[RMDB]
RNA sequence: GGGAACGACUCGAGUAGAGUCGAAAACUAAUUUAUCCACUCCGAUUGCGGCAAAGUUGGUGACGAAAAGUACGUUAACUGGGAAGAACUUUCAUCUACAUGACCUUUGACGUUAUUACUUUCGACGUUGGCCAAGAUGACAGAGUAGAGAAUGUCAGAUCACCAUAUAGUUCGCUAUAUGGUGAUCAAAAGAAACAACAACAACAAC
Reactivity to DMS in 0.01 (KOAc 150mM, MgCl2 10mM, bicine 150mM(pH8.5), 24C), signal-to-noise 4, nucleotides 027 to 156: c060u010a040a150u010u010u000a150u000c000c020a060c020u000c020c040g020a160u010u010g020c060g000g030c050a060a110a080g020u000u000g000g030u000g000a190c040g000a060a060a060a060g010u000a040c230g010u000u000a040a100c060u010g020g020g000a120a110g000a030a080c050u000u000u000c050a050u000c060u000a110c110a170u000g010a100c190c010u020u000u010g020a200c060g020u010u010a090u010u010a080c070u000u000u000c020g010a080c020g030u000u010g030g050c020c010a050a080g010a100u000g020a190c050a040g010a060g030u000a060g000a090g000a070a080u000g000u000c080a190
Reactivity to 2A3 in 0.01 (KOAc 150mM, MgCl2 10mM, bicine 150mM(pH8.5), 24C), signal-to-noise 6, nucleotides 027 to 156: c030u060a070a120u070u090u130a130u010c000c010a030c050u020c040c030g130a130u050u140g050c060g000g030c030a070a090a080g030u050u040g020g020u040g040a020c010g030a030a040a030a020g020u030a020c030g010u010u020a080a050c080u050g020g050g030a080a030g030a100a050c020u070u270u130c060a160u010c040u130a140c020a170u090g090a040c010c000u020u030u040g020a010c010g030u030u050a090u160u050a050c030u040u050u040c060g030a040c020g030u010u030g100g000c020c000a020a020g050a040u030g010a010c030a030g050a000g050u120a010g030a000g030a080a050u060g020u050c020a020